[RMDB]
RNA sequence: GGGAACGACUCGAGUAGAGUCGAAAACUAGCGAUCAGCGCUAGGUACCUAGGAUCUAGCUAGCGAUCGAUCAGAGUACGUCUGACGGAUCGCACAUGCUACGAUGCAGCGUCAUGGUGUACGAGUACACAUGUACUGCCUUCGGGCAGUACAUGUGAAAAGAAACAACAACAACAAC
Reactivity to 2A3 in 0.01 (KOAc 150mM, MgCl2 10mM, bicine 150mM(pH8.5), 24C), signal-to-noise 2, nucleotides 027 to 126: c000u010a000g020c010g110a140u160c150a050g250c030g040c050u000a000g000g040u030a090c020c010u040a110g050g030a020u050c000u020a000g000c000u020a010g000c040g000a000u000c010g130a150u030c010a020g020a010g050u280a230c100g290u000c000u010g000a000c040g100g010a050u070c050g000c030a000c020a020u170g010c000u030a030c170g020a060u050g120c030a060g000c030g020u130c100a150u240g220g060u110g090u170a060c040g040a060g080u060a020
Reactivity to DMS in 0.01 (KOAc 150mM, MgCl2 10mM, bicine 150mM(pH8.5), 24C), signal-to-noise 5, nucleotides 027 to 126: c010u010a020g010c010g010a300u010c220a190g010c030g020c010u000a010g010g000u000a070c010c020u000a130g040g000a030u000c040u010a040g010c000u000a120g020c020g000a030u000c000g000a050u000c020a010g010a070g010u020a080c250g020u000c000u000g010a020c070g010g000a010u000c010g010c000a040c140a050u010g000c000u000a030c170g000a030u000g020c050a110g000c110g010u000c090a070u010g000g000u000g030u000a050c030g010a120g020u010a110
Structure probing data (2A3 and DMS) for a 177-nucleotide construct. The reactions ran in a buffer of 150 mM KOAc, 10 mM MgCl2 and 150 mM bicine (pH 8.5), at 24 C. Reactivities are given for positions 27 through 126. For DMS the reverse transcriptase was MarathonRT.